[RMDB]
RNA sequence: GGGAACGACUCGAGUAGAGUCGAAAAGAUAUGGACGCAGUUGUAAUUGGGAACACUUUUGACGACAAAGGUAUCGGAAACGAUAUACUGUCGAUAAGUGUCCCAAUUACAACUGCGUCCUAAGUCACUUUAUUGGAGAGUUCGCUCUCCAAUAAAGAAAAGAAACAACAACAACAAC
Reactivity to DMS in 0.01 (KOAc 150mM, MgCl2 10mM, bicine 150mM(pH8.5), 24C), signal-to-noise 2, nucleotides 027 to 126: g000a070u010a300u010g000g000a010c000g010c000a020g010u000u000g010u000a010a000u000u000g000g010g000a070a040c000a000c000u000u000u000u000g020a270c180g020a020c020a020a100a020g010g010u000a000u000c000g000g000a150a100a200c000g000a030u000a000u000a010c000u000g010u000c000g010a130u000a010a010g010u000g000u000c000c000c000a000a000u000u000a000c000a000a020c000u000g000c010g000u000c000c000u000a000a060g010u000c070a240
This 177-nucleotide RNA was probed chemically with DMS.
Values cover nucleotides 27 to 126.
The data come from the RNA Mapping Database (RMDB), library TTRINS.
The reactions ran in a buffer of 150 mM KOAc, 10 mM MgCl2 and 150 mM bicine (pH 8.5), at 24 C.
For DMS, 3,807 sequencing reads were counted.